[RMDB]
Structure probing data (DMS and 2A3) for a 207-nucleotide construct. DMS adducts were read by reverse transcription with MarathonRT.
RNA sequence: GGGAACGACUCGAGUAGAGUCGAAAAUAAUUAGCGCCAGCCAUCUACCACAGGUCUCGCACAUGGGCAGUGGAUUUGAUGGUCACCUUACAUCGUGCUAGCGAGGGAACCUUGUCUGGGGGUGAACCGCGAAACAGUUCCAGGCUCACCGUUAGAACUAUACUUUUAGGUUCGCCUAAAAGUAUAGAAAAGAAACAACAACAACAAC
Reactivity to DMS in 0.01 (KOAc 150mM, MgCl2 10mM, bicine 150mM(pH8.5), 24C), signal-to-noise 3, nucleotides 027 to 156: u010a060a090u000u000a070g010c040g030c020c020a190g040c020c000a030u000c010u000a220c000c010a040c040a100g030g030u000c010u000c050g000c150a140c180a100u000g020g020g030c010a250g010u010g000g010a100u000u010u010g020a030u000g000g020u010c050a010c060c030u010u000a110c070a090u000c060g040u000g030c030u000a130g000c040g010a180g000g010g000a080a060c020c050u000u010g010u000c090u000g000g010g010g000g010u000g010a070a090c000c000g000c050g000a120a090a160c130a120g000u000u000c020c040a160g010g020c010u000c010a030c010c020g020u000u000a070g010a110a240
Reactivity to 2A3 in 0.01 (KOAc 150mM, MgCl2 10mM, bicine 150mM(pH8.5), 24C), signal-to-noise 6, nucleotides 027 to 156: u170a010a070u150u090a030g030c040g000c040c020a000g020c000c010a010u000c010u030a020c010c010a020c020a100g030g150u050c050u060c100g110c030a100c040a180u180g000g000g010c020a020g010u010g010g050a130u190u070u190g020a020u010g000g020u020c030a060c000c010u110u170a050c020a080u080c100g010u010g000c010u020a010g000c000g020a300g010g020g020a020a020c010c000u050u100g020u020c010u010g010g020g010g000g000u000g020a040a020c000c000g000c030g030a000a070a010c070a060g030u200u050c000c000a010g030g000c020u040c040a090c030c050g090u050u100a050g000a080a010
Overview: The RNA was probed in 150 mM KOAc, 10 mM MgCl2 and 150 mM bicine (pH 8.5) at 24 C. Reactivities are given for positions 27 through 156. The DMS profile rests on 8,221 reads. As a SHAPE reagent, 2A3 marks flexible, mostly unpaired nucleotides at the ribose 2'-OH. Reactivities are rounded to 0.1 and cut off at 0 and 3.